[RMDB]
RNA sequence: GGGAACGACUCGAGUAGAGUCGAAAAAGUAGAAUUGGACAUUACGGACGCUACCUUACCGUUGACUGUAGACUUGUAUGUAGUGGUCAGUGUCUCUACUGUAGAACCUGACGUAGUGGUAUAAGUAGCCUGCUCAUUAGUUCGCUAAUGAGCAGGCAAAAGAAACAACAACAACAAC
Reactivity to 2A3 in 0.01 (KOAc 150mM, MgCl2 10mM, bicine 150mM(pH8.5), 24C), signal-to-noise 2, nucleotides 027 to 126: a010g030u070a000g020a190a190u070u180g110g000a000c020a000u000u100a010c120g100g040a000c070g000c000u000a000c000c010u000u000a050c030c070g000u050u070g080a110c020u030g050u150a000g030a060c000u010u140g030u020a000u010g000u020a000g010u020g000g000u000c050a000g010u000g020u050c000u000c000u050a100c000u020g010u050a030g080a090a060c000c020u020g040a050c020g030u080a100g070u080g020g000u300a090u010a080a000g060u060a000
Reactivity to DMS in 0.01 (KOAc 150mM, MgCl2 10mM, bicine 150mM(pH8.5), 24C), signal-to-noise 1, nucleotides 027 to 126: a000g000u000a040g020a120a140u020u070g000g000a070c000a020u020u000a080c110g000g000a040c040g040c000u000a000c030c040u020u040a010c090c300g000u000u000g020a140c100u030g000u000a140g010a020c010u000u000g030u000a000u000g000u000a050g000u030g000g000u000c000a060g020u000g000u000c010u000c000u020a010c140u000g010u010a100g020a070a120c000c000u000g000a060c130g020u030a030g010u000g000g020u000a020u020a030a010g000u030a130
Structure probing data (2A3 and DMS) for a 177-nucleotide construct. Conditions: 150 mM KOAc, 10 mM MgCl2 and 150 mM bicine (pH 8.5), 24 C. The 2A3 profile rests on 606 reads. For DMS, 1,797 sequencing reads were counted.